Chemical mapping of a 207-nucleotide RNA with 2A3 and DMS. The 2A3 profile rests on 8,392 reads.
RNA sequence: GGGAACGACUCGAGUAGAGUCGAAAAAACGCUGGGUACAGAACUACUCCUCUAUCACGGCUCUCCCCACCGUAGUCUGAAGCGCGCACGGACUACGAGGAGCUAUCAGAGGAGCUGUACCUGUGCUGAAGCGCGCACGGCAACCGAAAGGUGCGAAGUCAUGUAUUAUCUUCGGAUAAUACAUGACAAAAGAAACAACAACAACAAC
Reactivity to 2A3 in 0.01 (KOAc 150mM, MgCl2 10mM, bicine 150mM(pH8.5), 24C), signal-to-noise 5, nucleotides 027 to 156: a000a000c020g000c010u010g000g000g000u000a000c010a010g020a200a070c100u180a100c000u210c040c010u000c030u060a300u240c060a030c070g030g000c000u000c000u020c020c030c000c010a020c030c000g000u000a000g000u000c000u030g080a220a080g000c000g000c000g000c000a000c010g010g000a000c000u000a000c000g000a010g010g000a000g000c010u070a090u300c040a010g000a000g010g000a000g000c000u000g000u000a000c000c000u010g010u010g000c000u020g020a100a040g010c010g000c000g000c000a000c000g010g000c000a010a010c000c000g060a070a050a030g010g000u010g010c010g030a120a010
Reactivity to DMS in 0.01 (KOAc 150mM, MgCl2 10mM, bicine 150mM(pH8.5), 24C), signal-to-noise 1, nucleotides 027 to 156: a090a030c010g070c030u020g010g030g000u000a030c040a110g000a140a050c030u000a140c050u000c000c000u010c070u030a300u000c100a010c050g000g120c040u000c030u010c300c060c090c030a300c140c000g020u000a020g000u000c010u000g000a050a110g020c070g050c000g000c000a300c020g010g000a050c000u010a030c000g010a270g010g000a070g030c030u020a050u000c000a070g010a040g000g000a070g020c000u000g000u010a050c010c010u000g030u000g020c000u020g010a080a070g040c000g000c080g060c040a300c020g010g030c030a000a100c050c020g010a090a120a210g060g090u000g010c000g010a120a170

The RNA was probed in 150 mM KOAc, 10 mM MgCl2 and 150 mM bicine (pH 8.5) at 24 C. It was measured as part of the RMDB library RNAMAK.